[RMDB]
RNA sequence: GGGAACGACUCGAGUAGAGUCGAAAAGAUAUGGACGUAGUAGGGAGCUUACACUCGGAAACGAGUGCGAGCAUCGAUCUACUCACGUCCUAAGUCAAAGAACAAGGUGGUUCGCCACCUUGUUCAAGUUACACGUUUGGUUCGCCAAACGUGUAACAAAAGAAACAACAACAACAAC
Reactivity to DMS in 0.01 (KOAc 150mM, MgCl2 10mM, bicine 150mM(pH8.5), 24C), signal-to-noise 3, nucleotides 027 to 126: g010a030u000a090u000g000g010a020c000g020u000a000g030u010a010g010g020g020a220g040c000u000u000a060c000a010c000u000c000g040g000a020a020a040c010g020a010g020u000g020c020g010a000g040c010a210u010c300g000a110u000c000u000a000c000u010c250a020c020g000u000c000c000u000a010a040g000u020c030a150a130a190g020a020a020c010a000a010g000g010u010g000g020u010u000c300g000c000c000a010c000c000u000u000g000u000u010c020a050a110
Reactivity to 2A3 in 0.01 (KOAc 150mM, MgCl2 10mM, bicine 150mM(pH8.5), 24C), signal-to-noise 2, nucleotides 027 to 126: g000a000u040a010u050g000g000a000c020g040u010a000g000u000a010g040g090g090a130g020c000u000u000a000c000a000c000u010c000g000g050a010a010a010c000g010a010g010u000g010c020g000a010g030c000a040u300c150g070a110u000c010u020a000c010u020c050a030c060g010u010c000c000u000a020a000g010u000c020a150a070a150g010a010a000c000a010a000g020g000u000g000g050u050u120c220g110c040c000a000c000c010u010u010g000u010u000c000a000a000
Source: RMDB library TTRDES, as collected in RNAgym. Chemical mapping of a 177-nucleotide RNA with DMS and 2A3.